The record gives the reactivity of an RNA of 177 nucleotides to DMS and 2A3.
The RNA was probed in 150 mM KOAc, 10 mM MgCl2 and 150 mM bicine (pH 8.5) at 24 C.
The DMS profile rests on 1,134 reads.
The data come from the RNA Mapping Database (RMDB), library TTRDEL.
For DMS the reverse transcriptase was MarathonRT.
For 2A3, 1,452 sequencing reads were counted.
RNA sequence: GGGAACGACUCGAGUAGAGUCGAAAAGAUAUGGAGUGAACUACGUUGAUAAAGGCGUUGAAAUCGGAAACGAUGGAGCCUUUGUUUGACGCACUCCUAAGUCGUGGGAGGGCGUUCGCGCCCUCAAGCGAUUGACUUUGUUCGCAAAGUCAAUCGCAAAAGAAACAACAACAACAAC
Reactivity to DMS in 0.01 (KOAc 150mM, MgCl2 10mM, bicine 150mM(pH8.5), 24C), signal-to-noise 1, nucleotides 027 to 126: g000a090u000a270u020g020g000a080g030u010g000a080a110c100u010a300c020g040u000u000g030a010u000a020a000a010g000g000c000g000u000u000g000a050a120a010u010c010g000g020a100a060a230c050g000a000u000g000g000a130g000c000c020u000u020u000g030u000u010u010g030a000c000g030c010a020c010u000c000c020u000a070a040g020u000c010g020u000g010g010g000a090g010g000g030c000g000u000u000c240g000c020g020c000c010c000u000c000a020a090
Reactivity to 2A3 in 0.01 (KOAc 150mM, MgCl2 10mM, bicine 150mM(pH8.5), 24C), signal-to-noise 1, nucleotides 027 to 126: g040a030u030a030u210g010g000a000g000u010g000a030a010c080u150a040c300g020u010u010g000a000u030a000a010a030g000g000c020g210u300u060g000a050a030a010u000c000g020g010a020a080a030c010g000a010u000g020g060a000g000c000c040u000u000u000g000u020u030u300g000a010c000g030c000a000c000u020c000c000u010a120a020g030u010c060g020u150g070g300g000a000g000g030g000c000g020u060u080c130g020c010g000c080c000c000u010c000a000a000